[RMDB]
RNA sequence: GGGAACGACUCGAGUAGAGUCGAAAAAAAAGAUAUGGACUGGGUGUCUUGGAUUUACGAUACUAUUCCCAUCGGAAACGAUGGGAACGAAUAUCGUUGUCAGACAUCAGCCAGUCCUAAGUCAAAAUCGACAUAACAAGUUCGCUUGUUAUGUCGAAAAAGAAACAACAACAACAAC
Reactivity to DMS in 0.01 (KOAc 150mM, MgCl2 10mM, bicine 150mM(pH8.5), 24C), signal-to-noise 2, nucleotides 027 to 126: a050a060a060a090g000a050u000a300u020g000g000a040c020u000g030g000g020u000g000u000c030u000u000g010g000a010u000u000u000a030c020g000a010u010a010c070u010a300u000u000c000c000c010a010u020c020g010g000a140a060a160c000g030a000u010g000g030g010a000a000c060g020a070a060u010a000u000c000g020u000u000g000u000c010a020g000a010c010a060u040c300a160g050c070c010a000g010u000c000c000u010a020a080g000u010c040a070a110a070a080
Reactivity to 2A3 in 0.01 (KOAc 150mM, MgCl2 10mM, bicine 150mM(pH8.5), 24C), signal-to-noise 2, nucleotides 027 to 126: a000a000a030a040g050a000u090a040u140g000g000a000c000u000g010g090g010u030g000u000c090u130u190g130g030a080u300u250u200a000c000g000a020u000a030c030u060a080u000u020c000c010c020a030u000c010g050g000a110a020a030c020g000a010u000g010g000g030a000a000c020g030a240a300u010a000u010c010g000u000u000g000u000c000a010g050a080c000a000u050c040a010g170c020c000a010g000u000c000c020u030a090a010g040u030c040a000a010a010a250